The record gives the reactivity of an RNA of 170 nucleotides to DMS and 2A3. For 2A3 the reverse transcriptase was SuperScript II with manganese. It was measured as part of the RMDB library 15KLIB. For DMS the reverse transcriptase was MarathonRT.
RNA sequence: GGGAACGACUCGAGUAGAGUCGAAAACCCCGGGAUAGCCGAAGUGCCGAGGAAGAGCCGGAGGAGGAGAGGCAAGAGAUCCCGAGGGGGCUUCAGGCUAAAGAGUGGACGAUUUUCGGGGAAGGUCAGACGGACCAGUUCGCUGGUCCGAAAAGAAACAACAACAACAAC
Reactivity to DMS in 0.01 (KOAc 150mM, MgCl2 10mM, bicine 150mM(pH8.5), 24C), signal-to-noise 3, nucleotides 027 to 129: c020c010c010c130g000g000g000a080u030a050g050c000c050g020a080a080g020u030g030c040c020g020a070g000g000a000a020g030a070g030c110c080g070g010a040g030g000a080g040g000a090g010a030g010g110c160a170a060g020a030g080a070u030c060c020c020g020a140g000g000g000g000g000c060u000u070c020a070g010g030c150u060a090a090a020g010a030g060u060g040g030a010c060g020a100u030u030u080u020c070g010g000g000g000a080a020g000g000u000c000a080g050a110
Reactivity to 2A3 in 0.01 (KOAc 150mM, MgCl2 10mM, bicine 150mM(pH8.5), 24C), signal-to-noise 3, nucleotides 027 to 129: c000c000c000c010g010g050g020a080u080a060g040c020c010g010a110a010g070u090g070c030c020g020a010g040g040a040a040g000a000g030c020c030g010g030a010g010g010a020g000g030a050g000a010g000g010c020a030a000g020a010g000a040u030c010c000c010g000a030g000g010g000g000g000c000u070u050c010a040g050g000c000u110a090a040a000g050a010g030u090g000g050a030c030g030a100u040u020u040u060c030g030g000g000g020a010a010g000g050u030c000a020g040a080